[RMDB]
Chemical mapping of a 177-nucleotide RNA with DMS and 2A3.

RNA sequence: GGGAACGACUCGAGUAGAGUCGAAAAGACUGUCCUCGCCGCCGUCGCGGGCAGUGUCUAGCCAGGCCUUGACAAGCUAGCCGGAGGAGCGCCUAGGAACCCGAGCCGGAGCUCAGCGAGCGCAGCCUAAGAAGGAUCUCUUCGGAGAUCCUUCUUAAAAAGAAACAACAACAACAAC
Reactivity to DMS in 0.01 (KOAc 150mM, MgCl2 10mM, bicine 150mM(pH8.5), 24C), signal-to-noise 3, nucleotides 027 to 126: g000a130c030u010g010u000c050c010u000c040g010c060c070g000c060c040g000u000c030g010c130g000g030g000c000a040g020u000g000u010c010u030a100g030c040c060a090g010g000c030c040u000u030g010a110c120a100a170g020c040u000a080g020c040c000g010g000a090g010g000a070g030c080g010c030c040u000a120g010g010a080a190c070c010c000g000a130g010c020c030g000g000a120g000c050u010c040a080g000c060g000a100g000c070g010c000a060g040c010c050
Reactivity to 2A3 in 0.01 (KOAc 150mM, MgCl2 10mM, bicine 150mM(pH8.5), 24C), signal-to-noise 2, nucleotides 027 to 126: g050a030c050u040g030u050c000c020u010c030g000c040c070g100c000c050g080u090c000g030c020g010g010g000c010a020g040u030g000u050c070u020a010g030c010c030a060g000g040c000c010u030u100g040a020c010a040a030g010c020u090a040g020c000c020g050g040a030g010g050a110g020c040g030c000c000u020a040g020g030a180a140c000c000c020g000a010g000c000c010g050g000a020g010c000u020c030a020g010c020g040a030g000c010g000c020a020g040c020c000
Conditions: 150 mM KOAc, 10 mM MgCl2 and 150 mM bicine (pH 8.5), 24 C.